[RMDB]
RNA sequence: GGGAACGACUCGAGUAGAGUCGAAAAGAUAUGGACAACAAGGCUUUUGACGGCUAUGUAUAUCGGAAACGAUAUACUAGCCGAUAAGCCUGUUGUCCUAAGUCAAACUCAAUGUUCGCAUUGAGAAUCCAUAACGUGCGUUCGCGCACGUUAUGGAAAAAGAAACAACAACAACAAC
Reactivity to DMS in 0.01 (KOAc 150mM, MgCl2 10mM, bicine 150mM(pH8.5), 24C), signal-to-noise 1, nucleotides 027 to 126: g010a030u000a300u010g000g000a000c000a000a000c000a080a110g030g010c010u000u000u000u000g010a230c180g020g000c000u010a010u020g000u000a000u000a000u010c000g020g000a090a040a160c000g010a010u000a000u000a000c000u000a010g030c000c000g010a000u000a010a010g020c000c000u020g000u000u000g000u000c020c010u000a020a100g020u000c010a190a070a210c000u000c000a020a020u000g000u000u000c270g010c000a000u000u010g000a000g000a120a160
Reactivity to 2A3 in 0.01 (KOAc 150mM, MgCl2 10mM, bicine 150mM(pH8.5), 24C), signal-to-noise 2, nucleotides 027 to 126: g010a000u070a010u140g000g000a020c000a000a040c090a300a240g000g040c100u040u130u240u300g260a250c140g000g040c030u000a040u300g030u010a000u000a000u000c030g000g000a100a020a040c000g000a000u000a010u010a020c000u000a000g020c000c000g000a000u000a010a010g000c000c000u010g000u000u010g010u000c000c000u000a010a000g000u000c020a050a040a040c010u010c010a020a000u000g030u120u120c300g030c230a000u030u020g030a000g090a070a170
Structure probing data (DMS and 2A3) for a 177-nucleotide construct.
For DMS the reverse transcriptase was MarathonRT.
It was measured as part of the RMDB library TTRDES.
2A3 adducts were read by reverse transcription with SuperScript II with manganese.
The reactions ran in a buffer of 150 mM KOAc, 10 mM MgCl2 and 150 mM bicine (pH 8.5), at 24 C.